[RMDB]
RNA sequence: GGGAACGACUCGAGUAGAGUCGAAAAUGCCGGCCCGUAUACCUUCCUCGCCGCCGACGCCCUGGUGCUCAAGGUGCGCGAGGCAGGCCGCGUCGUCGGGGUGCACACCUUGAUCGCCACCGGCGUCUCAGGUGACGCCGUUCGCGGCGUCACCUGAAAAAGAAACAACAACAACAAC
Reactivity to 2A3 in 0.01 (KOAc 150mM, MgCl2 10mM, bicine 150mM(pH8.5), 24C), signal-to-noise 1, nucleotides 027 to 126: u180g030c090c050g000g050c000c120c060g060u080a070u080a150c000c000u050u000c020c000u000c000g040c000c010g010c000c010g030a000c010g000c000c000c230u210g080g000u210g000c000u030c040a000a170g000g000u000g010c060g050c000g060a060g110g000c030a040g040g020c020c010g050c020g080u100c030g000u000c000g000g030g060g090u130g090c100a070c070a010c050c000u010u000g000a050u030c060g000c000c000a080c000c000g000g010c000g100u000c050